RNA sequence: GGGAACGACUCGAGUAGAGUCGAAAAUGAGGUUAAAGGAUGCUAAUGAAUAAUGAAAGGUGUUGAUGAGGGACGACAGGGGGGGGGCAUCCGAAUCAACGGGAGAGAGAGAGGCAUGCGAUGCGCGGAUAUGAGCAGCGUUCGCGCUGCUCAUAUCAAAAGAAACAACAACAACAAC
Reactivity to DMS in 0.01 (KOAc 150mM, MgCl2 10mM, bicine 150mM(pH8.5), 24C), signal-to-noise 1, nucleotides 027 to 126: u000g000a060g030g000u060u020a060a160a060g000g050a020u000g010c040u020a110a100u020g000a200a040u070a170a090u060g000a090a060a040g010g000u040g000u020u000g000a100u000g000a090g020g000g000a120c220g000a110c080a160g000g000g000g000g000g000g000g000g000c000a010u000c010c010g020a010a030u010c160a020a050c080g010g000g000a010g010a130g000a020g000a020g040a150g010g000c140a020u000g000c090g010a070u010g000c060g050c130g040
Reactivity to 2A3 in 0.01 (KOAc 150mM, MgCl2 10mM, bicine 150mM(pH8.5), 24C), signal-to-noise 2, nucleotides 027 to 126: u170g000a020g090g110u200u250a070a070a000g040g000a000u000g030c000u050a170a000u160g110a140a140u220a280a010u120g170a070a000a020g090g000u070g000u180u000g060a160u070g030a110g000g000g000a010c030g000a010c090a000g030g180g000g000g040g010g000g000g000c000a000u010c000c000g000a000a050u100c010a070a050c030g020g000g000a070g000a000g000a000g000a000g010a000g050g000c010a020u080g030c000g130a070u020g070c050g030c000g070